[RMDB]
RNA sequence: GGGAACGACUCGAGUAGAGUCGAAAAUAUGGUCUAUAUAUACACUACAAUUUAGUUAUUAAUUGGAUAACCGAUGUGAUUGUUCAAUCAAUAUUAAGAGGGUUGGUAAAUUGGUACAUAGCUAAUAAUACCUAUACUCCAAAUACACCCAAUAAUACUACGUACUUUAGUUCGCUAAAGUACGUAGAAAAGAAACAACAACAACAAC
Reactivity to 2A3 in 0.01 (KOAc 150mM, MgCl2 10mM, bicine 150mM(pH8.5), 24C), signal-to-noise 3, nucleotides 027 to 156: u210a120u080g000g030u030c030u000a040u010a030u010a000u080a210c020a030c050u150a040c050a130a100u080u180u140a090g010u030u050a070u080u070a070a060u050u070g030g000a020u050a090a040c080c080g090a160u100g040u030g090a120u060u040g020u070u010c010a000a000u020c020a040a010u050a030u110u080a080a030g040a070g100g020g010u070u050g010g000u020a060a090a140u040u010g010g000u030a040c040a050u040a050g000c000u020a060a000u070a160a030u020a210c000c000u000a000u050a020c030u010c010c000a060a010a000u030a020c010a020c000c010c000a040a000u080a040a020u050a020
Reactivity to DMS in 0.01 (KOAc 150mM, MgCl2 10mM, bicine 150mM(pH8.5), 24C), signal-to-noise 2, nucleotides 027 to 156: u000a050u000g010g000u010c040u000a120u000a120u020a140u000a130c050a120c030u000a060c020a090a120u000u000u000a100g010u000u010a030u000u000a020a020u000u000g010g020a040u000a010a000c010c010g050a230u000g040u000g020a160u000u000g030u000u010c010a020a040u000c000a000a030u000a050u010u000a070a130g010a170g000g010g040u010u000g010g010u000a010a120a250u000u020g000g010u000a040c100a100u000a180g020c070u000a040a180u000a070a130u000a070c030c010u000a060u000a130c040u000c000c010a030a050a110u000a060c090a060c010c010c000a030a120u000a070a160u000a210